The data come from the RNA Mapping Database (RMDB), library 15KLIB. This 170-nucleotide RNA was probed chemically with 2A3 and DMS. Values cover nucleotides 27 to 129. For DMS, 3,720 sequencing reads were counted. 2A3 adducts were read by reverse transcription with SuperScript II with manganese. The reactions ran in a buffer of 150 mM KOAc, 10 mM MgCl2 and 150 mM bicine (pH 8.5), at 24 C.

RNA sequence: GGGAACGACUCGAGUAGAGUCGAAAAGCGCGUCCUCCUUCGGAUGCCCAGGUCGGACCGCGAGGAGGUGGAGAUGCCAUGCCGACCCGAAGAGGAAAGAAGGACGCGAGACGGUGAACCUGUGAGUACGGACGGCGCUUCGGCGCCGUCAAAAGAAACAACAACAACAAC
Reactivity to 2A3 in 0.01 (KOAc 150mM, MgCl2 10mM, bicine 150mM(pH8.5), 24C), signal-to-noise 2, nucleotides 027 to 129: g020c000g010c010g030u000c000c000u040c000c060u090u200c010g020g080a070u150g060c050c000c000a030g050g000u000c020g010g000a080c020c000g050c000g030a030g060g000a070g020g000u040g010g040a140g000a060u210g050c000c000a040u040g000c000c000g020a020c000c000c000g000a050a040g000a140g050g000a020a020a020g020a000a010g020g000a000c070g000c010g000a020g020a000c010g050g030u000g000a040a000c000c000u040g000u100g000a000g020u070a020c040g000
Reactivity to DMS in 0.01 (KOAc 150mM, MgCl2 10mM, bicine 150mM(pH8.5), 24C), signal-to-noise 2, nucleotides 027 to 129: g100c040g030c090g030u000c000c070u020c030c000u080u000c020g010g060a180u020g050c120c070c030a170g050g010u030c040g010g000a000c000c210g090c070g020a080g020g060a070g000g040u040g020g010a080g050a120u010g010c030c010a000u010g030c050c000g020a010c080c000c090g100a100a090g040a110g050g060a000a000a000g040a030a050g000g000a000c090g060c100g020a070g050a080c070g010g000u130g040a030a080c010c050u040g000u050g080a070g020u080a040c000g030